[RMDB]
RNA sequence: GGGAACGACUCGAGUAGAGUCGAAAACAGAGAAGAAGAAGACGAAGAGGAGGAAGAGACAGAAGAAGAGACAUCAGAGAGGGACUGUGGGAUUACACACACGUUCUCCGCUUCGCCGCGAUGUCUGUAUUAGGCUAAAUUUCGAUUUAGCCUAAUAAAAAGAAACAACAACAACAAC
Reactivity to 2A3 in 0.01 (KOAc 150mM, MgCl2 10mM, bicine 150mM(pH8.5), 24C), signal-to-noise 9, nucleotides 027 to 126: c050a010g080a000g020a100a010g030a040a000g040a020a010g040a010c040g030a040a030g010a020g050g010a010g010g020a030a020g030a010g030a030c050a030g100a080a010g040a050a010g050a020g010a040c020a040u060c030a020g060a010g020a070g080g020g030a040c020u030g010u050g020g030g050a070u170u300a070c090a000c010a000c000a010c120g030u090u020c040u010c010c010g020c040u080u080c060g050c060c010g040c040g030a040u050g030u030c020u020g020
Reactivity to DMS in 0.01 (KOAc 150mM, MgCl2 10mM, bicine 150mM(pH8.5), 24C), signal-to-noise 9, nucleotides 027 to 126: c100a120g010a070g010a050a050g010a070a050g010a070a050g010a060c080g010a080a050g000a080g000g000a060g000g000a040a040g000a070g000a110c160a060g000a070a060g000a090a060g000a040g010a030c050a020u010c020a080g000a090g000a090g000g000g000a030c070u010g010u010g010g000g010a140u030u040a080c120a070c040a020c040a050c120g000u010u000c010u010c010c030g000c050u010u010c100g010c050c050g000c120g000a020u010g000u000c010u000g010